[RMDB]
RNA sequence: GGGAACGACUCGAGUAGAGUCGAAAAGUUGUCUUCUUCGGAAGACAACAAAUAAAAUCUGCGGUAAAUAAUUCGAGGCGUUUACCGCUGAACGCCUCGAUAAAACUUGAGCCUUCGGGCUCAAGAACUACCUAAAUUCCUUCGGGAAUUUAGGUAGAAAAGAAACAACAACAACAAC
Reactivity to 2A3 in 0.01 (KOAc 150mM, MgCl2 10mM, bicine 150mM(pH8.5), 24C), signal-to-noise 1, nucleotides 027 to 126: g000u000u000g000u030c000u020u010c000u010u060c230g080g010a010a020g000a000c000a000a000c000a010a020a010u070a000a020a000a060u090c090u060g060c020g080g040u080a120a120a070u090a080a260u280u040c000g000a000g010g000c000g000u000u000u000a050c000c020g000c020u030g000a000a000c000g010c000c010u000c000g010a020u020a000a090a010a020c000u010u000g000a000g000c010c000u020u050c150g080g000g000c020u000c000a000a000g000a000a000
Reactivity to DMS in 0.01 (KOAc 150mM, MgCl2 10mM, bicine 150mM(pH8.5), 24C), signal-to-noise 1, nucleotides 027 to 126: g010u010u010g000u000c010u000u000c000u000u000c230g070g030a020a020g010a000c010a000a010c000a030a070a090u010a050a050a150a050u000c020u000g010c050g020g020u000a090a150a150u010a130a090u010u000c000g030a020g000g020c010g010u010u000u000a050c070c060g010c050u010g010a010a010c020g020c010c000u030c000g010a020u010a010a050a110a160c000u000u000g000a010g010c000c000u000u000c230g020g030g050c010u000c010a000a000g000a080a160